[RMDB]
RNA sequence: GGGAACGACUCGAGUAGAGUCGAAAAGUGGGCGGGGUGUGCCUAACAUCCAAGAAUCUACUCCAAAUAAGGGAAAAUAUGAAAGAGCUGGAUUUUGGCUUCCCAGGACUGCCCGAUCUGGUGGCUUUGGGAUCGGGCGACAUCUGGCGGUUGAUACCAUGAUAGUUCCCUUCGGGGAACUAUCAUGAAAAGAAACAACAACAACAAC
Reactivity to 2A3 in 0.01 (KOAc 150mM, MgCl2 10mM, bicine 150mM(pH8.5), 24C), signal-to-noise 1, nucleotides 027 to 156: g080u080g010g000g020c090g000g010g000g000u060g010u000g070c000c030u050a070a020c010a020u020c000c000a060a020g100a080a060u010c010u070a070c040u060c030c050a150a080a070u230a090a120g010g000g070a050a050a070a140u190a060u140g100a080a090a070g020a030g080c130u100g010g040a040u040u000u030u170g060g000c010u040u020c000c010c000a000g010g050a030c060u090g010c000c000c000g000a010u010c020u060g080g000u100g040g020c090u030u130u240g070g020g000a010u000c000g000g000g010c000g000a000c000a010u020c070u080g060g020c060g000g040u040u070g040a030u010a080c030
The data come from the RNA Mapping Database (RMDB), library OK3TST. This 207-nucleotide RNA was probed chemically with 2A3. For 2A3 the reverse transcriptase was SuperScript II with manganese. Reactivities are given for positions 27 through 156.